[RMDB]
The record gives the reactivity of an RNA of 177 nucleotides to 2A3 and DMS. The data come from the RNA Mapping Database (RMDB), library TTRDEL. Values cover nucleotides 27 to 126. Conditions: 150 mM KOAc, 10 mM MgCl2 and 150 mM bicine (pH 8.5), 24 C.
RNA sequence: GGGAACGACUCGAGUAGAGUCGAAAAGAUAUGGAAGAGGGAGCAACUCGAUGAAAGGAAUCGGAAACGAUUCCUGGAGAAACUUGCAUCGAUCUCUUCCUAAGUCAAACCCUGCUUCGGCAGGGAAGCUAUACCCACUCUUCGGAGUGGGUAUAGCAAAAGAAACAACAACAACAAC
Reactivity to 2A3 in 0.01 (KOAc 150mM, MgCl2 10mM, bicine 150mM(pH8.5), 24C), signal-to-noise 2, nucleotides 027 to 126: g000a010u020a000u110g020g010a000a000g010a000g030g050g010a060g000c020a050a060c020u020c030g300a300u080g080a080a000a000g000g000a000a010u000c010g000g030a040a070a060c020g000a010u000u000c020c000u010g000g000a020g030a030a190a070c160u020u080g030c010a180u300c080g030a120u010c010u000c000u010u010c010c000u010a110a010g050u030c010a010a000a300c010c000c000u010g000c020u020u060c120g170g000c000a000g010g000g020a000a000
Reactivity to DMS in 0.01 (KOAc 150mM, MgCl2 10mM, bicine 150mM(pH8.5), 24C), signal-to-noise 3, nucleotides 027 to 126: g010a060u000a300u010g010g010a020a010g020a010g000g000g000a030g010c010a020a020c130u000c020g020a160u000g020a130a080a020g000g000a010a000u000c000g010g010a120a050a180c000g010a010u000u000c000c000u000g000g010a060g000a040a060a110c260u000u000g000c000a300u010c090g000a030u010c010u000c010u000u000c010c000u000a000a060g000u010c030a110a130a150c000c010c010u000g000c000u000u010c210g020g000c010a000g010g000g000a010a000